[RMDB]
RNA sequence: GGGAACGACUCGAGUAGAGUCGAAAAGGGGAUAGUCAGAAGUGGCCUUGCGCUUCUGAUGAAACUUUAAAGGAUAAGGCAGGAAUUGAUGGCUUUGGUUCUGCUCCUGCACGAAAAACUUAGGCAAAGAUAAGCAUGUAGAAAGCUUAUGAUUUCCGAAUCCUUACCUCUUCGGAGGUAAGGAUUCAAAAGAAACAACAACAACAAC
Reactivity to 2A3 in 0.01 (KOAc 150mM, MgCl2 10mM, bicine 150mM(pH8.5), 24C), signal-to-noise 1, nucleotides 027 to 156: g070g000g000g010a060u060a030g010u030c000a010g000a010a010g030u000g040g000c040c020u000u090g000c000g020c000u000u000c000u000g000a000u040g030a010a000a000c000u080u150u150a090a070a000g030g000a020u030a080a000g000g050c030a000g010g000a020a020u050u100g050a060u060g060g030c030u130u020u040g040g020u080u030c010u020g070c050u010c000c000u000g030c030a030c040g020a130a000a000a000a000c070u040u050a030g000g060c030a010a020a010g020a060u010a000a030g020c050a040u080g000u110a030g120a100a060a020g000c020u020u050a030u090g140a160u030u090u020c000c010
Structure probing data (2A3) for a 207-nucleotide construct.
It was measured as part of the RMDB library ARCHII.
Values cover nucleotides 27 to 156.